[RMDB]
RNA sequence: GGGAACGACUCGAGUAGAGUCGAAAAAUGCACUGGUUCGCCAGUGCAUGAUUACCGAGAAAGUACCUCGGUAUAAAAGUGCAACCCUUGGAAACAAGGGAAUUCCGAACCGAUUCGUCGGUUCGAAUACUCUUGAUAAAUUCGUUUAUCAAGAGUAAAAAGAAACAACAACAACAAC
Reactivity to DMS in 0.01 (KOAc 150mM, MgCl2 10mM, bicine 150mM(pH8.5), 24C), signal-to-noise 9, nucleotides 027 to 126: a010u000g000c000a010c000u000g010g010u000u010c220g020c010c000a010g010u000g010c000a000u000g000a120u000u000a040c000c000g000a020g000a120a150a160g010u010a130c140c000u000c000g010g010u000a010u010a040a070a080a110g010u010g010c170a120a130c000c000c000u000u000g000g010a160a090a200c010a010a010g000g010g010a030a030u010u000c080c010g010a010a000c000c000g010a030u000u010c180g010u000c010g010g000u000u000c000g000a050a070
Reactivity to 2A3 in 0.01 (KOAc 150mM, MgCl2 10mM, bicine 150mM(pH8.5), 24C), signal-to-noise 2, nucleotides 027 to 126: a000u000g010c000a000c000u010g010g030u050u040c100g050c060c000a010g000u000g000c000a000u000g000a000u000u040a010c000c010g010a000g010a010a260a010g130u100a060c000c010u000c000g000g040u000a010u020a010a030a010a000g100u080g070c040a090a160c010c000c000u000u000g030g000a050a050a020c010a010a000g000g000g030a010a020u040u010c050c000g000a000a010c000c000g010a010u040u060c170g040u010c000g050g000u000u010c000g000a000a010